[RMDB]
RNA sequence: GGGAACGACUCGAGUAGAGUCGAAAAGACAGACACACAGUGAGAGACACAGAGAGUCAGAGACUCAGAGAGACUCACACUGUGUCACAGUGACUCUCUGAGUGAGUGUCUGUCACUGACUCAGAGACAGACAUCUCCGUUUCGACGGAGAUGUCUGAAAAGAAACAACAACAACAAC
Reactivity to 2A3 in 0.01 (KOAc 150mM, MgCl2 10mM, bicine 150mM(pH8.5), 24C), signal-to-noise 2, nucleotides 027 to 126: g040a010c030a010g010a030c020a000c010a000c010a090g030u080g050a180g030a010g000a050c030a010c020a090g150a000g000a010g190u030c050a020g060a020g040a180c000u000c050a010g010a010g000a000g030a110c010u010c100a040c000a010c020u010g000u030g080u050c000a030c030a000g030u030g040a030c010u010c000u000c010u000g010a010g000u040g030a010g010u020g000u030c010u010g010u010c000a020c000u010g030a010c000u000c040a030g020a010g020a150
Reactivity to DMS in 0.01 (KOAc 150mM, MgCl2 10mM, bicine 150mM(pH8.5), 24C), signal-to-noise 3, nucleotides 027 to 126: g000a030c030a030g000a050c060a060c070a120c100a060g030u010g000a060g020a060g000a070c130a120c040a060g000a190g010a050g010u010c060a090g010a210g010a040c000u000c020a020g000a060g000a060g000a100c070u020c130a080c050a030c000u000g010u000g000u000c160a090c100a070g030u000g000a110c080u000c000u000c000u020g000a010g020u000g000a050g020u010g000u000c030u010g000u000c000a060c030u000g000a040c060u000c040a050g010a090g000a130